[RMDB]
RNA sequence: GGGAACGACUCGAGUAGAGUCGAAAAACGUCAAUCCAGAAGUAACUCCAGAUCGCGCCAUACUCUCGGAUCAGGCGCUCGCCGUACUCCGCUAUGUACUCCACCCACUUGUGGUGGAAUGCUGGCGAAGAACUUCGUAUUUCGAUACGAAGUUCUUAAAAGAAACAACAACAACAAC
Reactivity to 2A3 in 0.01 (KOAc 150mM, MgCl2 10mM, bicine 150mM(pH8.5), 24C), signal-to-noise 3, nucleotides 027 to 126: a000c030g040u040c020a040a060u070c010c010a040g030a080a030g090u050a080a080c040u030c040c040a040g010a240u080c050g010c010g020c060c010a040u050a110c030u040c010u020c080g030g030a070u050c060a090g020g030c020g020c030u020c040g080c020c000g030u020a080c020u030c020c000g000c010u020a020u300g000u010a010c010u000c000c000a000c020c010c010a130c100u140u190g090u260g070g000u000g000g010a000a000u020g010c000u000g000g000c000g020
Reactivity to DMS in 0.01 (KOAc 150mM, MgCl2 10mM, bicine 150mM(pH8.5), 24C), signal-to-noise 5, nucleotides 027 to 126: a060c080g010u000c070a160a050u000c020c020a080g000a120a080g010u000a050a110c070u000c040c030a100g000a080u010c090g020c070g020c040c030a130u000a070c050u000c050u010c100g010g000a060u000c140a090g000g000c060g010c050u000c070g010c070c020g000u000a070c050u000c070c010g010c010u000a020u010g030u000a020c050u000c010c000a010c000c000c010a200c290u010u010g010u020g030g030u000g000g000a000a010u000g010c000u000g000g000c000g000